Record summary
An RNA of 177 nucleotides, treated with DMS and 2A3 and read out base by base. For DMS the reverse transcriptase was MarathonRT. 2A3 is a SHAPE reagent: it acylates the 2'-hydroxyl of flexible nucleotides of all four kinds. The RNA was probed in 150 mM KOAc, 10 mM MgCl2 and 150 mM bicine (pH 8.5) at 24 C. The DMS profile rests on 1,430 reads.
RNA sequence: GGGAACGACUCGAGUAGAGUCGAAAAUCCUAAUCGUUCGCGAUUAGGAAAAUAAGGAAACCUUCGUGCUGGCGCGACAAAAUGAGUGCUCGCCCUCAUAAAAAACUCAGCUCUUCGGAGCUGAGAACCUUUCAUGAAAGUUCGCUUUCAUGAAAGGAAAAGAAACAACAACAACAAC
Reactivity to DMS in 0.01 (KOAc 150mM, MgCl2 10mM, bicine 150mM(pH8.5), 24C), signal-to-noise 2, nucleotides 027 to 126: u000c000c000u000a000a000u000c000g010u000u020c170g030c010g000a010u000u010a010g000g000a000a030a070a080u000a080a120g010g020a090a080a140c030c010u000u000c060g000u010g000c050u010g010g010c090g010c020g000a080c100a080a070a070a090u010g010a130g000u000g020c100u000c180g020c000c030c020u000c070a080u010a000a080a030a090a090a100c000u000c010a010g010c000u010c000u000u000c210g020g000a000g010c000u000g000a000g000a020a070
Reactivity to 2A3 in 0.01 (KOAc 150mM, MgCl2 10mM, bicine 150mM(pH8.5), 24C), signal-to-noise 3, nucleotides 027 to 126: u000c010c000u000a000a010u000c000g030u040u040c200g010c000g070a000u000u020a010g010g010a030a050a000a050u160a050a030g120g020a090a070a030c000c010u100u110c070g050u050g020c050u030g030g010c040g020c000g060a050c060a010a230a040a160u180g050a100g120u060g050c030u000c030g000c010c010c000u020c010a050u250a020a150a010a020a030a040c000u000c000a010g010c000u000c010u050u090c230g110g010a020g000c000u010g000a000g000a000a010